[RMDB]
RNA sequence: GGGAACGACUCGAGUAGAGUCGAAAAGAUAUGGAUCUGACCUAUCGCCAUUCUCUUCGAUAAGUCUACAAUCGGAAACGAUUGAGACUUUUGACGAAGAGGAUGGCGAUAGGUCAGAUCCUAAGUCCGAUACAAUGGUGUUCGCACCAUUGUAUCGAAAAGAAACAACAACAACAAC
Reactivity to DMS in 0.01 (KOAc 150mM, MgCl2 10mM, bicine 150mM(pH8.5), 24C), signal-to-noise 2, nucleotides 027 to 126: g010a100u000a300u000g000g000a010u000c000u000g000a020c000c000u000a000u000c000g010c000c000a000u000u000c000u010c000u000u000c000g020a160u010a030a010g000u000c000u020a160c010a000a000u010c010g010g000a140a120a280c010g010a020u010u010g000a070g000a030c000u000u010u000u020g030a220c210g010a000a040g000a010g000g000a000u000g000g010c000g020a000u000a000g010g010u000c000a000g000a010u000c000c000u010a010a050g020u000c070